[RMDB]
RNA sequence: GGGAACGACUCGAGUAGAGUCGAAAAGCUAAUCAACAGCAGAUUAAGCAACUAGAAAAGGCUUGUAAUAUUGCUAAAUCAGCUUAUGAGAGAGAUCGUGCCGUUGCUCGUAAGUUAGAACGGAUGGCAUAGAAUAGACCUUCGGGUCUAUUCUAUGAAAAGAAACAACAACAACAAC
Reactivity to 2A3 in 0.01 (KOAc 150mM, MgCl2 10mM, bicine 150mM(pH8.5), 24C), signal-to-noise 4, nucleotides 027 to 126: g010c010u050a070a050u060c030a040a100c020a070g090c000a010g000a050u050u030a100a000g000c010a020a060c060u080a030g140a060a160a020a010g110g010c030u040u050g060u050a060a100u110a080u150u100g020c010u040a070a040a060u040c030a010g000c000u030u030a030u090g000a030g000a000g000a000g010a100u100c040g040u090g050c030c000g050u030u070g050c020u020c000g060u050a050a060g040u060u090a030g030a090a020c040g040g030a040u090g060g000
Reactivity to DMS in 0.01 (KOAc 150mM, MgCl2 10mM, bicine 150mM(pH8.5), 24C), signal-to-noise 7, nucleotides 027 to 126: g010c030u000a060a090u010c050a080a130c210a060g010c030a060g020a050u000u000a060a060g010c010a040a070c090u000a130g010a100a090a150a110g000g000c060u010u000g010u020a060a090u000a100u010u000g000c010u010a040a060a070u010c030a030g010c000u000u000a080u000g010a060g000a090g000a080g000a060u000c070g010u010g010c020c020g010u000u000g020c020u000c040g000u010a030a040g000u000u000a050g000a050a060c090g000g010a080u010g000g000